[RMDB]
RNA sequence: GGGAACGACUCGAGUAGAGUCGAAAAAGCUCCCUGCUGGUUGUGGGAAGAGGACAGCCAGCCAGUCCUGGUCUGGGAGGAGCCUGGCUAGCCCCUGUGCUAUUCAGCACAGGAAGGAACCUUGGAACAUACCUGCCACGUUCGCGUGGCAGGUAUGAAAAGAAACAACAACAACAAC
Reactivity to DMS in 0.01 (KOAc 150mM, MgCl2 10mM, bicine 150mM(pH8.5), 24C), signal-to-noise 1, nucleotides 027 to 126: a230g020c140u000c020c000c030u000g060c070u000g000g010u010u000g030u000g020g000g010a200a140g010a080g000g010a070c070a080g010c010c000a000g010c010c120a050g000u020c050c010u010g030g010u000c050u020g040g000g000a010g000g000a100g020c090c000u010g010g000c050u000a050g000c100c070c000c010u020g020u000g020c000u000a200u010u000c260a010g010c010a000c020a000g000g000a060a030g010g010a120a150c050c010u000u020g000g000a180a150